[RMDB]
RNA sequence: GGGAACGACUCGAGUAGAGUCGAAAAGUGACAUUCCAUCACCUUUGCUGUGUUUCCUUCCUUGGGAGCAAGCCACUAGGUCCAGCCCACACUCAAGGAAGUGGGGCAGAUGAUACAAGGGUGUGAGUGCCAGGAGGCAGGAUCACUGGGGACCAUCCAAUUCAACAGAAUUCGUUCUGUUGAAUUGAAAAGAAACAACAACAACAAC
Reactivity to 2A3 in 0.01 (KOAc 150mM, MgCl2 10mM, bicine 150mM(pH8.5), 24C), signal-to-noise 4, nucleotides 027 to 156: g070u040g010a020c020a120u070u060c050c010a030u080c020a030c010c020u050u080u100g030c040u090g030u020g060u110u080u100c010c000u000u050c010c010u040u020g030g000g000a030g010c020a040a000g010c030c010a080c090u130a090g100g000u030c020c020a030g000c000c000c000a100c010a020c020u010c020a050a050g040g030a040a010g060u220g020g010g020g000c010a030g010a160u220g020a040u090a220c030a030a020g020g020g000u020g000u030g030a080g020u070g010c020c050a100g100g050a100g130g000c030a030g000g050a040u040c010a010c060u040g020g010g030g040a020c010c000a010u040c030
Reactivity to DMS in 0.01 (KOAc 150mM, MgCl2 10mM, bicine 150mM(pH8.5), 24C), signal-to-noise 4, nucleotides 027 to 156: g030u000g020a020c020a110u000u010c050c060a230u000c010a020c020c000u000u010u000g000c020u000g030u000g010u000u000u000c030c010u000u010c020c010u000u000g000g000g000a090g030c030a150a130g000c000c030a100c080u010a140g050g000u010c040c060a300g060c020c010c050a150c070a140c020u000c010a090a040g020g020a080a030g010u010g000g000g020g010c010a050g000a120u000g030a210u010a040c040a040a050g040g010g010u000g040u010g000a300g030u000g020c020c000a120g020g010a190g000g000c040a080g020g000a110u000c030a080c050u030g020g010g010g000a150c030c010a190u010c010
An RNA of 207 nucleotides, treated with 2A3 and DMS and read out base by base. The RNA was probed in 150 mM KOAc, 10 mM MgCl2 and 150 mM bicine (pH 8.5) at 24 C. The DMS profile rests on 8,087 reads. For 2A3 the reverse transcriptase was SuperScript II with manganese. It was measured as part of the RMDB library OK3TST.